RNA sequence: GGGAACGACUCGAGUAGAGUCGAAAAUUAGCCCUAUUGGAGGUCUUUGUUAUCGGUCAUGGUUCAAGUCGGCCGAUAUGACCCUGGGAAAUAGGAAGAUGCAUAAGGUGGUUGCUACGCUUGGGGCUCGCUAUAUAAAAUUCGUUUUAUAUAGCGAAAAAGAAACAACAACAACAAC
Reactivity to 2A3 in 0.01 (KOAc 150mM, MgCl2 10mM, bicine 150mM(pH8.5), 24C), signal-to-noise 3, nucleotides 027 to 126: u030u010a010g040c000c000c000u020a060u030u110g200g030a150g040g030u020c050u120u290u300g150u180u030a000u000c020g010g000u020c030a110u150g150g040u210u230c090a110a050g090u070c080g020g000c010c000g000a000u000a000u030g000a010c000c000c000u030g060g040g050a060a090a020u040a030g050g040a060a060g040a060u120g000c050a050u060a130a040g080g000u040g000g070u080u090g000c010u040a030c020g020c030u030u040g000g010g050g010c020
Reactivity to DMS in 0.01 (KOAc 150mM, MgCl2 10mM, bicine 150mM(pH8.5), 24C), signal-to-noise 8, nucleotides 027 to 126: u010u000a100g010c070c010c010u000a090u000u000g010g010a140g010g010u000c010u010u010u010g010u010u000a010u000c000g010g010u000c000a120u010g020g010u000u010c250a090a170g010u000c110g000g000c000c010g010a010u000a010u000g010a050c020c010c030u000g010g010g010a060a050a040u000a040g010g000a100a080g010a080u000g010c050a070u000a070a080g010g020u000g000g010u000u000g000c030u000a070c100g010c040u000u000g010g000g000g010c190